[RMDB]
RNA sequence: GGGAACGACUCGAGUAGAGUCGAAAAUCCACUAUGAAUCUAGUCACUAAAUAAACACAAUUAGCUACUGUGUGUAAUAGUGAGCGUUGAUAACACAAAAUAAUAGUAUAGUUUUGGAAGAUUAUACGCGCCCUUGCUCCGUUCGCGGAGCAAGGAACAGGUAGGAUAUCUUCGGAUAUCCUACCUGAAAAGAAACAACAACAACAAC
Reactivity to 2A3 in 0.01 (KOAc 150mM, MgCl2 10mM, bicine 150mM(pH8.5), 24C), signal-to-noise 3, nucleotides 027 to 156: u000c020c000a020c080u190a150u200g140a120a040u050c070u080a060g080u000c000a000c000u010a020a020a070u030a000a110a000c000a010c020a060a130u170u160a090g060c080u150a050c030u030g010u000g000u000g010u010a010a030u000a030g000u010g010a010g040c020g010u050u090g080a070u130a210a030c060a000c010a060a140a030a110u220a150a080u100a110g060u050a030u010a070g010u030u040u090u100g100g040a100a070g000a080u010u030a030u030a040c060g000c000g080c070c000c000u000u000g000c010u000c010c000g050u040u070c230g010c020g080g000a000g030c000a000a000g010g000a000a010
Reactivity to DMS in 0.01 (KOAc 150mM, MgCl2 10mM, bicine 150mM(pH8.5), 24C), signal-to-noise 1, nucleotides 027 to 156: u000c010c010a090c150u010a070u010g040a180a180u020c030u000a110g000u000c000a010c020u010a020a000a080u020a110a230a030c000a010c000a000a080u000u000a220g020c180u000a150c060u000g050u060g010u020g040u000a230a300u010a030g020u000g010a070g020c060g000u000u000g060a000u010a070a140c020a060c030a000a030a040a070u020a040a160u000a080g010u010a070u000a070g000u000u000u020u000g020g000a090a170g010a110u010u000a020u000a000c000g080c050g000c080c000c030u000u000g010c010u010c010c000g040u000u010c170g010c070g070g000a070g010c000a000a010g000g040a060a030